[RMDB]
RNA sequence: GGGAACGACUCGAGUAGAGUCGAAAAGGGCAGCGAGGGAUGCGACUGCAGCUGCAGCUGUAGCUGCCGAAGCCCACGGGAAGCGGGGAGGAGCGAUCAUUGAGGCAAACUACAAGAAGCGCAUGGCCUUGCAUCUUGGAUUCGUCCAAGAUGCAAGAAAAGAAACAACAACAACAAC
Reactivity to 2A3 in 0.01 (KOAc 150mM, MgCl2 10mM, bicine 150mM(pH8.5), 24C), signal-to-noise 2, nucleotides 027 to 126: g060g010g030c020a020g010c000g040a060g050g000g030a060u090g050c020g040a090c040u040g020c050a040g030c030u150g010c000a020g040c100u200g060u050a000g020c010u020g000c010c000g030a020a000g000c000c010c040a020c030g070g020g020a100a050g030c050g020g000g000g000a070g040g000a040g030c040g000a020u070c050a070u050u120g060a020g050g000c060a200a020a010c070u120a060c070a080a000g080a070a000g030c000g010c020a030u070g060g000c000
Reactivity to DMS in 0.01 (KOAc 150mM, MgCl2 10mM, bicine 150mM(pH8.5), 24C), signal-to-noise 3, nucleotides 027 to 126: g030g010g010c030a040g030c070g010a180g030g000g010a110u000g010c030g000a170c040u000g000c040a090g020c020u000g010c030a110g000c090u010g000u000a120g000c000u020g020c020c060g020a120a170g010c020c030c030a090c090g000g000g010a060a110g010c090g010g020g010g040a080g010g000a070g010c070g000a060u000c090a090u000u010g000a100g020g000c100a040a050a080c070u010a060c110a060a090g000a060a140g010c070g000c080a060u000g010g010c120